The data come from the RNA Mapping Database (RMDB), library OK1LIB. This 177-nucleotide RNA was probed chemically with DMS and 2A3. Values cover nucleotides 27 to 126. The reactions ran in a buffer of 150 mM KOAc, 10 mM MgCl2 and 150 mM bicine (pH 8.5), at 24 C.
[RMDB]
RNA sequence: GGGAACGACUCGAGUAGAGUCGAAAAGUUGACUGCGAAAAGCAGUCAACAUGGCUGACACGUGUCCAAGUUAGCCAAGGACACUAAAGAUGCAGCGUUUGAGCGUGUCCCUCAAGCAGCUGCAUCACAGUACGUACUCAUUCGUGAGUACGUACUGAAAAGAAACAACAACAACAAC
Reactivity to DMS in 0.01 (KOAc 150mM, MgCl2 10mM, bicine 150mM(pH8.5), 24C), signal-to-noise 5, nucleotides 027 to 126: g010u000u010g000a010c000u000g030c000g000a090a070a130a180g010c000a010g020u000c000a000a000c000a050u030g000g000c040u000g020a040c110a060c200g000u030g010u030c030c020a100a100g010u010u020a070g010c020c020a090a140g000g000a040c080a040c050u010a070a060a080g010a010u000g000c000a010g030c020g020u020u000u000g000a010g010c120g020u010g010u020c070c050c000u000c000a010a010g000c100a070g040c010u000g000c000a000u000c000a100
Reactivity to 2A3 in 0.01 (KOAc 150mM, MgCl2 10mM, bicine 150mM(pH8.5), 24C), signal-to-noise 9, nucleotides 027 to 126: g010u000u000g000a000c000u000g000c020g060a120a070a120a120g010c000a000g000u000c000a000a000c000a000u020g010g000c080u120g120a040c030a020c220g080u070g020u020c010c000a080a030g050u060u060a010g050c010c000a020a070g020g000a010c010a010c030u110a070a060a050g000a000u000g000c010a000g000c010g010u000u000u020g020a020g010c150g030u120g090u140c030c010c000u010c010a030a020g010c080a040g000c010u000g000c000a000u000c000a000